[RMDB]
The record gives the reactivity of an RNA of 177 nucleotides to DMS. The data come from the RNA Mapping Database (RMDB), library TTRINS. Reactivities are rounded to 0.1 and cut off at 0 and 3.
RNA sequence: GGGAACGACUCGAGUAGAGUCGAAAAGAUAUGGAAUAAGUGUCGGAACUACAAGAGUUAGGACAGGAUUGCAUCUCGGAAACGAGAUGCUCGAUUCCUAACCUUGCCGACACUUAUUCCUAAGUCACUAAGUUCACAUCUUCGGAUGUGAACUUAGAAAAGAAACAACAACAACAAC
Reactivity to DMS in 0.01 (KOAc 150mM, MgCl2 10mM, bicine 150mM(pH8.5), 24C), signal-to-noise 2, nucleotides 027 to 126: g010a030u000a300u020g000g000a000a020u000a020a010g020u000g010u000c000g000g040a080a040c100u010a300c040a010a010g000a170g020u000u000a010g000g000a030c300a100g010g000a090u010u000g010c000a010u000c000u000c000g000g000a110a030a200c000g020a000g000a000u000g050c010u010c050g000a300u010u000c000c010u000a000a010c000c000u000u000g000c020c000g020a000c000a000c010u000u000a000u000u000c000c000u000a010a040g000u010c050a210